An RNA of 207 nucleotides, treated with DMS and 2A3 and read out base by base. For DMS, 2,929 sequencing reads were counted. It was measured as part of the RMDB library OK3TST.
RNA sequence: GGGAACGACUCGAGUAGAGUCGAAAAAACGUAUGGAAGACUUAGAGAAGAAGAGCGGACUUUCGAAGGACGAACUCCAGAAAUUUCUAAAAGUCAAUGAUGACCUGAUCCAGCUCCUACCUAAUGCAGAAGUUGCUGUAACCAAACAUGGCGAUGCAUUAAUGGACCAGUUCGCUGGUCCAUUAAUAAAAGAAACAACAACAACAAC
Reactivity to DMS in 0.01 (KOAc 150mM, MgCl2 10mM, bicine 150mM(pH8.5), 24C), signal-to-noise 2, nucleotides 027 to 156: a060a050c080g040u010a130u000g030g010a090a120g010a080c070u030u000a130g020a110g000a050a060g020a170a050g000a080g040c060g000g010a050c070u000u000u000c080g020a070a100g000g000a110c070g020a070a040c080u000c030c030a300g000a090a090a060u000u010u000c030u000a050a040a060a100g020u000c030a040a100u000g010a100u000g020a060c030c010u000g020a090u000c020c000a090g000c110u000c010c000u000a070c060c000u010a050a120u010g050c060a090g040a020a300g020u000u000g000c010u000g020u000a070a130c010c020a040a100a130c130a100u010g010g040c030g000a090u000g010c080
Reactivity to 2A3 in 0.01 (KOAc 150mM, MgCl2 10mM, bicine 150mM(pH8.5), 24C), signal-to-noise 2, nucleotides 027 to 156: a000a020c060g040u100a070u110g000g030a040a000g020a030c020u060u070a010g010a030g000a180a000g020a040a000g010a020g020c090g030g000a060c000u080u080u050c080g040a090a010g030g000a000c020g000a020a010c010u000c020c000a040g060a070a080a040u080u030u000c040u050a070a060a010a010g050u060c080a070a100u120g020a030u150g020a050c000c020u060g000a070u000c000c020a000g030c010u030c030c000u010a060c000c000u100a090a020u110g010c030a000g020a150a030g050u080u050g010c020u060g010u060a020a050c030c010a050a140a060c040a100u090g030g000c040g020a010u140g030c010